This 177-nucleotide RNA was probed chemically with DMS and 2A3. In probing experiments dimethyl sulfate is read out at A N1 and C N3, which are open when not base-paired. 2A3 adducts were read by reverse transcription with SuperScript II with manganese. The reactions ran in a buffer of 150 mM KOAc, 10 mM MgCl2 and 150 mM bicine (pH 8.5), at 24 C.
RNA sequence: GGGAACGACUCGAGUAGAGUCGAAAAAGUCCAUGUGGUACUAAUCGAGUAGAGGUCACACCUUGUACACCUACCACAAAUAGAAUCUGUCAUUGUGACUCGAAUAGUUAUUGUCUCCUAAAAGCUAGAUUAUGCCCAUAUUCGUAUGGGCAUAAUCAAAAGAAACAACAACAACAAC
Reactivity to DMS in 0.01 (KOAc 150mM, MgCl2 10mM, bicine 150mM(pH8.5), 24C), signal-to-noise 5, nucleotides 027 to 126: a130g000u000c030c060a160u000g000u000g020g010u000a020c080u020a070a090u030c060g010a060g020u000a110g010a050g000g000u010c150a120c100a300c130c050u010u000g030u010a060c070a050c130c080u000a100c130c050a030c120a060a060a150u010a080g000a040a040u010c130u000g020u000c040a070u010u000g000u000g010a050c010u000c040g000a050a110u000a060g020u010u000a090u000u010g010u020c050u000c020c020u000a040a070a070a100g020c120u010a100
Reactivity to 2A3 in 0.01 (KOAc 150mM, MgCl2 10mM, bicine 150mM(pH8.5), 24C), signal-to-noise 3, nucleotides 027 to 126: a000g060u030c030c020a090u110g050u080g020g010u020a020c010u070a040a140u120c040g050a050g050u050a020g030a020g030g010u060c040a040c000a060c060c080u020u110g080u050a020c020a040c030c000u010a030c020c060a010c000a010a040a000u170a030g040a000a080u140c080u100g040u020c030a050u080u080g040u000g050a010c030u010c020g030a060a040u040a080g060u030u080a080u110u160g070u050c050u040c060c020u030a100a130a020a020g120c060u110a040